RNA sequence: GGGAACGACUCGAGUAGAGUCGAAAACGGUUACCCCUUCUUUACCGUUAUCAAGGAAGGUACUCGGCCAUGCUAAGGGAAGCAUUAUUCCUUAGGCGCAUGUCGCCGCCAGCAUGGUGUGAGGGGAAAAAGUAUGCUGGGUUCGCCCAGCAUACAACUUGUCAACUUUGUUCGCAAAGUUGACAAGAAAAGAAACAACAACAACAAC
Reactivity to DMS in 0.01 (KOAc 150mM, MgCl2 10mM, bicine 150mM(pH8.5), 24C), signal-to-noise 3, nucleotides 027 to 156: c010g010g010u000u000a030c020c030c010c000u010u000c010u000u000u000a030c010c010g020u010u010a020u010c110a020a030g010g030a050a020g000g030u010a090c010u000c020g040g000c000c020a030u000g020c000u000a130a140g000g010g000a040a080g020c180a170u010u000a180u000u000c010c010u000u000a110g020g030c010g060c050a100u020g030u000c030g030c020c000g030c090c100a060g020c000a010u000g010g010u000g000u000g040a050g030g020g000g020a050a050a090a100a200g000u000a010u000g020c000u000g000g010g030u010u010c300g030c020c000c000a030g000c000a000u000a010c000a050a070
Reactivity to 2A3 in 0.01 (KOAc 150mM, MgCl2 10mM, bicine 150mM(pH8.5), 24C), signal-to-noise 4, nucleotides 027 to 156: c010g010g020u050u080a060c000c000c030c000u040u010c010u030u030u050a070c020c020g190u090u100a100u070c070a020a030g050g020a010a020g010g020u050a050c010u010c030g030g000c000c000a010u010g000c000u040a060a060g030g000g010a030a010g030c070a180u100u120a120u270u040c010c000u030u060a070g020g000c010g000c050a140u230g090u280c040g020c060c000g010c050c040a000g020c010a000u010g010g020u060g110u140g030a040g000g010g010g070a030a100a000a000a010g000u000a000u000g000c000u000g000g000g050u050u030c140g090c020c000c000a000g000c000a000u000a000c000a000a010